[RMDB]
RNA sequence: GGGAACGACUCGAGUAGAGUCGAAAACGGGCCAACGCGCAUAGAUAAUCUGGUCGCACCGCUGCCCCACAAGGGCACCGACAGGCGCAUCACAGAUAUCACCGAAUGACUUCGGAGUGAUCUGGCGGAGUUAUUCUAGGUUCGCCUAGAAUAACUCAAAAGAAACAACAACAACAAC
Reactivity to DMS in 0.01 (KOAc 150mM, MgCl2 10mM, bicine 150mM(pH8.5), 24C), signal-to-noise 2, nucleotides 027 to 126: c070g020g010g000c030c020a030a070c100g010c040g020c040a150u000a110g010a050u000a130a070u000c050u000g000g000u000c040g050c000a090c030c050g000c120u000g000c010c000c010c040a110c300a100a300g010g000g020c010a020c070c000g010a100c180a060g000g010c030g010c130a100u000c050a180c030a050g000a040u000a030u000c010a250c020c010g010a030a080u000g020a150c240u000u010c000g000g000a130g000u000g010a060u000c060u000g010g050c140g010
Reactivity to 2A3 in 0.01 (KOAc 150mM, MgCl2 10mM, bicine 150mM(pH8.5), 24C), signal-to-noise 2, nucleotides 027 to 126: c040g050g000g000c020c000a060a080c050g050c000g030c060a060u090a160g030a060u080a120a160u100c020u030g040g020u040c030g000c020a030c000c030g000c020u010g010c010c010c000c020a060c020a030a050g020g010g000c000a010c040c000g050a070c030a090g120g000c020g020c060a010u120c040a030c000a020g010a000u010a000u010c010a020c040c010g010a030a040u170g170a140c060u020u000c010g010g010a040g000u070g020a070u020c050u040g040g000c000g010

Structure probing data (DMS and 2A3) for a 177-nucleotide construct. High 2A3 reactivity points to a flexible backbone, as in loops and unpaired stretches. Conditions: 150 mM KOAc, 10 mM MgCl2 and 150 mM bicine (pH 8.5), 24 C.